[RMDB]
RNA sequence: GGGAACGACUCGAGUAGAGUCGAAAACUCGCGCGAACAUUGAGGCGUGGAGCGCGACAUGAAUCAGCCUCCAUUAGAUUAAUGGUCGACAGAUCAGCGGCGAUCAGCGACCGAAUUAGAAGCCGCUACCGGAAGAGGAGACGCUCGACGGACGUCAGGUACCAUUAAUGUUCGCAUUAAUGGUACCAAAAGAAACAACAACAACAAC
Reactivity to 2A3 in 0.01 (KOAc 150mM, MgCl2 10mM, bicine 150mM(pH8.5), 24C), signal-to-noise 3, nucleotides 027 to 156: c030u030c010g000c000g000c000g090a260a030c000a050u060u100g000a010g010g010c020g000u020g010g000a040g000c030g010c000g040a050c080a120u230g080a070a020u110c000a120g000c000c030u000c070c000a160u170u150a070g070a030u060u160a130a070u220g000g000u000c020g020a080c060a140g020a020u000c010a010g050c010g010g000c000g000a010u010c040a000g030c010g020a000c000c000g010a030a020u130u090a050g040a160a010g010c020c000g000c000u010a040c020c020g000g030a090a010g010a050g110g030a100g020a080c020g030c060u030c020g070a020c010g000g060a070c010g030u040c090a020
Reactivity to DMS in 0.01 (KOAc 150mM, MgCl2 10mM, bicine 150mM(pH8.5), 24C), signal-to-noise 1, nucleotides 027 to 156: c040u020c010g180c020g020c000g000a110a100c050a130u010u030g030a120g000g020c020g020u000g010g040a210g010c130g040c020g000a020c070a080u000g000a000a060u010c170a220g000c010c000u000c030c050a130u050u010a140g040a120u020u030a070a100u010g040g000u000c040g070a130c050a140g000a030u000c040a130g010c070g030g000c020g030a070u010c010a040g000c010g010a060c020c020g000a030a040u000u000a270g030a060a010g000c000c010g000c020u040a150c040c050g050g000a090a110g020a200g060g020a210g000a030c010g020c060u000c000g050a140c000g060g010a000c020g000u020c010a090
Chemical mapping of a 207-nucleotide RNA with 2A3 and DMS. The reactions ran in a buffer of 150 mM KOAc, 10 mM MgCl2 and 150 mM bicine (pH 8.5), at 24 C.